This 177-nucleotide RNA was probed chemically with DMS and 2A3. For DMS, 898 sequencing reads were counted. The 2A3 profile rests on 2,853 reads. Values are in units of 0.01, from 0 to 300, in steps of 10. The reactions ran in a buffer of 150 mM KOAc, 10 mM MgCl2 and 150 mM bicine (pH 8.5), at 24 C.

[RMDB]
RNA sequence: GGGAACGACUCGAGUAGAGUCGAAAAAAGAUAUGGAUCGGUCUGUGAUGGAGCCACAGAGGGUAAGUCGGAAACGACUUACCUACCCACCUGUGGAACUACUCUGCAUGGCCGAUCCUAAGUCAAAGCUAACUAAUCACUUCGGUGAUUAGUUAGCAAAAGAAACAACAACAACAAC
Reactivity to DMS in 0.01 (KOAc 150mM, MgCl2 10mM, bicine 150mM(pH8.5), 24C), signal-to-noise 1, nucleotides 027 to 126: a140a060g000a010u000a040u030g000g000a050u000c020g010g030u000c020u030g040u000g040a300u030g000g000a030g020c010c030a000c000a010g030a130g000g030g030u000a000a000g030u010c000g010g000a070a030a030c010g000a030c000u000u000a010c000c010u000a030c010c030c020a300c090c000u000g000u000g000g010a060a010c030u000a300c010u000c030u000g000c040a000u000g020g010c000c040g000a010u000c000c000u000a010a050g000u010c000a060a150a100
Reactivity to 2A3 in 0.01 (KOAc 150mM, MgCl2 10mM, bicine 150mM(pH8.5), 24C), signal-to-noise 2, nucleotides 027 to 126: a010a020g020a000u030a000u080g020g020a010u000c010g000g050u000c020u060g110u070g150a300u300g100g000a020g010c000c020a030c000a000g020a000g000g020g000u010a000a010g010u030c010g030g000a010a000a000c000g010a000c010u000u000a000c000c000u010a010c020c000c010a020c000c020u000g000u030g010g050a020a050c050u180a070c010u250c080u180g070c040a080u300g000g000c000c000g000a000u000c000c010u000a000a010g020u000c000a140a100a000